[RMDB]
RNA sequence: GGGAACGACUCGAGUAGAGUCGAAAAACGAAAACUACGCACUCGCAGCUUAAUAACCUGCGCUGAGCCCUUCUCCCCCAGCUUGCCUGUGUCCUAGGGAAUAGGAAGGUCAUCCUUCACAGGAUCGUCUAGGUAAUCCCUUUCGAGGGAUUACCAAAGUACUAUGCGGUUUCGACCGCAUAGUACUAAAAGAAACAACAACAACAAC
Reactivity to 2A3 in 0.01 (KOAc 150mM, MgCl2 10mM, bicine 150mM(pH8.5), 24C), signal-to-noise 1, nucleotides 027 to 156: a010c030g070a050a010a000a020c080u200a050c150g000c030a070c010u000c020g000c000a010g000c000u040u010a020a000u030a000a160c030c010u030g030c010g050c260u080g040a080g040c000c000c020u070u000c050u040c000c000c000c000c000a000g000c020u000u120g010c010c020u000g010u000g010u000c000c000u010a060g040g000g070a090a060u040a100g040g040a030a010g000g050u020c010a110u100c040c030u090u020c040a020c030a020g040g000a030u100c070g040u000c010u060a060g000g010u000a000a000u000c000c000c000u040u000u050c130g020a010g000g000g000a000u000u000a000c000c010a000a000
Reactivity to DMS in 0.01 (KOAc 150mM, MgCl2 10mM, bicine 150mM(pH8.5), 24C), signal-to-noise 1, nucleotides 027 to 156: a090c050g000a090a000a070a130c020u040a050c020g000c040a130c050u010c040g070c050a040g020c010u000u000a170a160u000a110a070c240c000u000g030c010g040c160u010g000a070g010c010c030c040u000u000c050u000c040c010c030c000c050a040g000c030u000u000g000c050c010u000g010u000g010u000c040c000u000a120g030g000g040a090a080u000a070g030g000a070a080g050g020u000c100a100u000c030c020u000u010c120a090c100a050g020g000a090u000c070g000u000c020u000a050g040g050u000a000a010u000c000c000c000u000u000u000c190g050a030g040g000g010a010u000u000a000c000c000a030a020